RNA sequence: GGGAACGACUCGAGUAGAGUCGAAAAUUCCUGUUCGCAGGAAAUGACUCCGUAGGAGCGAGAAGAGCUGAUGACCGGAACUGUGGGUUCGAAAGAGCCCACUCAGUACGCAAGGCUCGGAUCGCUCCUAAACGGCCACGUGCAUAUUCGUAUGCAAAUAUUUAUUAGGUUUCGACCUAAUAAAUAUAAAAGAAACAACAACAACAAC
Reactivity to 2A3 in 0.01 (KOAc 150mM, MgCl2 10mM, bicine 150mM(pH8.5), 24C), signal-to-noise 2, nucleotides 027 to 156: u030u010c000c000u010g010u050u090c170g010c040a010g030g030a020a060a100u130g070a080c080u030c050c000g010u000a000g000g000a010g000c000g020a020g000a020a060g020a000g020c000u060g020a200u160g060a300c160c020g000g010a020a000c000u000g010u000g010g000g000u000u000c000g040a070a120a080g000a050g020c000c020c000a000c000u000c010a020g000u000a000c010g000c030a060a140g000g010c010u000c010g000g010a000u000c000g020c010u010c000c000u000a000a020a000c010g010g020c020c090a070c120g040u040g010c010a020u040a090u080u140c150g060u040a040u030g010c000a000a120
Reactivity to DMS in 0.01 (KOAc 150mM, MgCl2 10mM, bicine 150mM(pH8.5), 24C), signal-to-noise 2, nucleotides 027 to 156: u000u000c010c000u010g000u010u000c170g030c010a120g010g000a070a170a160u010g000a070c030u000c000c050g000u000a080g010g000a020g060c030g000a150g000a300a270g000a040g000c020u000g030a200u000g020a080c230c010g040g040a140a240c040u000g000u010g010g050g020u000u010c000g000a160a170a290g010a020g020c040c010c000a010c010u000c010a050g020u000a180c010g010c010a100a280g010g010c020u010c010g030g010a300u000c000g030c000u020c010c010u000a010a000a070c060g000g010c060c000a070c100g010u000g010c010a040u000a060u000u000c230g010u000a020u000g010c000a090a150
This 207-nucleotide RNA was probed chemically with 2A3 and DMS. 2A3 adducts were read by reverse transcription with SuperScript II with manganese. Reactivities are given for positions 27 through 156. The reactions ran in a buffer of 150 mM KOAc, 10 mM MgCl2 and 150 mM bicine (pH 8.5), at 24 C. Source: RMDB library RNAMAK, as collected in RNAgym.